Chemical mapping of a 207-nucleotide RNA with 2A3 and DMS. The reactions ran in a buffer of 150 mM KOAc, 10 mM MgCl2 and 150 mM bicine (pH 8.5), at 24 C. For 2A3, 7,369 sequencing reads were counted. For 2A3 the reverse transcriptase was SuperScript II with manganese. DMS adducts were read by reverse transcription with MarathonRT. Source: RMDB library M2RFPK, as collected in RNAgym.

RNA sequence: GGGAACGACUCGAGUAGAGUCGAAAACGGAUUAGGCGUGGAGGCGAAAGUCACCCUCCUCGCAUCGCAAGUUCGUGCUUGCGACUUACACGUAGGGCGAGGGGUGGGCGCAAGUUGCCAUGAGACCAAAAUAUGUAGUUCUUCGGAACUACAUAAAGAACAAAUAAUCUUUCGAGAUUAUUUGUUCAAAAGAAACAACAACAACAAC
Reactivity to 2A3 in 0.01 (KOAc 150mM, MgCl2 10mM, bicine 150mM(pH8.5), 24C), signal-to-noise 7, nucleotides 027 to 156: c030g050g030a120u120u170a080g080g000c010g000u020g020g030a010g020g030c060g080a180a050a010g080u090c030a080c020c000c000u020c010c000u000c010g000c010a010u020c000g000c000a000a010g010u210u300c150g170u300g060c000u000u000g000c000g010a000c000u060u100a050c110a020c100g120u140a110g040g030g010c050g030a060g010g010g030g030u160g000g020g000c050g000c030a050a060g030u020u050g040c020c020a040u090g030a030g020a080c030c050a030a010a020a090u060a000u010g000u000a000g000u000u000c000u020u030c170g070g000a000a000c000u000a000c000a000u000a000a010a000
Reactivity to DMS in 0.01 (KOAc 150mM, MgCl2 10mM, bicine 150mM(pH8.5), 24C), signal-to-noise 2, nucleotides 027 to 156: c050g040g010a120u000u000a090g020g010c020g040u000g000g020a100g010g040c050g050a050a100a150g000u000c010a090c010c000c000u000c000c010u000c000g020c100a070u000c000g010c000a010a020g000u000u000c300g030u020g030c010u000u010g000c000g000a040c050u000u000a130c150a110c090g000u000a080g010g020g010c020g010a050g020g000g010g020u010g000g000g000c040g020c070a070a120g000u000u010g020c020c040a110u000g000a190g010a140c040c040a050a070a080a180u000a010u000g020u000a030g010u000u000c010u000u000c300g010g010a010a000c000u010a000c000a000u000a010a050a110